[RMDB]
RNA sequence: GGGAACGACUCGAGUAGAGUCGAAAAAGCGUAGCGGUACGCCGCUACGCAAGGCGCAUUUGAACUGUAUUGUACGCCUUGCAUAAAGCAAAAGUACUAAAAAAACGUGCCGUUACGACGGAACGAAAAAACAUCCAUUGGUUCGCCAAUGGAUGAAGCCGGAUUAAGAGUUCGCUCUUAAUCCGGCAAAAGAAACAACAACAACAAC
Reactivity to 2A3 in 0.01 (KOAc 150mM, MgCl2 10mM, bicine 150mM(pH8.5), 24C), signal-to-noise 1, nucleotides 027 to 156: a000g010c000g000u000a000g020c000g040g010u020a070c070g010c030c040g050c000u030a010c010g000c000a000a010g020g000c000g010c070a060u120u050u300g160a210a160c170u140g030u290a070u290u080g000u000a020c030g000c000c070u000u000g000c000a020u100a200a240a000g000c090a000a120a120a000g100u140a120c090u210a170a000a000a000a000a000a000c010g010u000g000c000c000g000u000u000a000c030g080a020c000g020g020a010a130c070g130a030a060a000a000a000a030c000a000u000c070c000a000u030u010g070g000u040u020c130g050c160c000a000a000u000g060g020a000u000g000a000a000